[RMDB]
RNA sequence: GGGAACGACUCGAGUAGAGUCGAAAAGCACCGCCGCAGUGCAGCCAACCUCCCACCGCACACACGCUGCCCGAGCCUGCUCCUGUCGCAGUCUUACCCGGUCCGGGGCCGGACCCGGGUAGGCGUAGGAUCAUAAAUCAUUCGUGAUUUAUGAUCCAAAAGAAACAACAACAACAAC
Reactivity to 2A3 in 0.01 (KOAc 150mM, MgCl2 10mM, bicine 150mM(pH8.5), 24C), signal-to-noise 4, nucleotides 027 to 126: g020c000a010c040c030g110c030c030g030c070a040g030u040g000c030a020g070c040c030a050a080c010c010u000c020c000c000a030c000c040g000c010a020c000a000c000a010c070g030c030u030g000c000c000c020g040a030g020c000c010u020g000c000u020c010c010u040g020u060c040g000c100a030g020u020c010u050u030a020c000c000c010g010g020u020c000c010g040g020g200g070c130c010g030g000a030c060c170c010g010g020g000u000a010g010g000c020g020u030a050
Reactivity to DMS in 0.01 (KOAc 150mM, MgCl2 10mM, bicine 150mM(pH8.5), 24C), signal-to-noise 6, nucleotides 027 to 126: g010c040a060c030c050g010c050c040g010c070a120g010u000g000c050a090g010c070c060a090a120c100c050u000c020c000c020a100c080c050g010c050a060c080a070c090a060c070g000c030u000g010c030c020c030g000a110g000c030c010u000g000c030u000c010c010u000g020u010c070g010c100a110g010u010c020u000u010a030c010c010c000g010g010u000c000c010g010g010g010g030c150c020g020g000a020c060c040c030g020g010g020u000a010g010g010c060g010u010a090